The record gives the reactivity of an RNA of 207 nucleotides to 2A3.
RNA sequence: GGGAACGACUCGAGUAGAGUCGAAAAGUCAUGCCUUCGGGCAUGACAGGUACCGAGAGGUACCAAAUAGCGUACAGUAGACUCAGACUGUACGCUAAAAAAGUGUGUGUUCAAUAAGAUCCAAUUGAACACACACUAAAAUGGAUCAAGGGUGUAAGUAUACGGCUGAGUUCGCUCAGCCGUAUACAAAAGAAACAACAACAACAAC
Reactivity to 2A3 in 0.01 (KOAc 150mM, MgCl2 10mM, bicine 150mM(pH8.5), 24C), signal-to-noise 1, nucleotides 027 to 156: g000u010c000a000u010g000c040c000u040u050c300g000g000g000c010a010u000g000a000c000a000g000g000u000a010c010c010g000a010g030a020g030g000u000a000c000c010a010a020a000u040a000g020c000g000u000a010c000a000g020u040a010g090a170c060u020c170a000g050a040c000u030g000u000a000c000g000c000u000a000a000a000a000a000a000g000u000g000u020g000u000g010u000u000c000a000a000u070a150a040g080a150u110c060c040a010a050u020u000g000a000a010c000a000c000a000c000a000c000u000a000a020a000a020u040g080g030a020u070c090a110a100g050g030g000u050g040u030a120a060
The RNA was probed in 150 mM KOAc, 10 mM MgCl2 and 150 mM bicine (pH 8.5) at 24 C. It was measured as part of the RMDB library OK3TST. Reactivities are rounded to 0.1 and cut off at 0 and 3.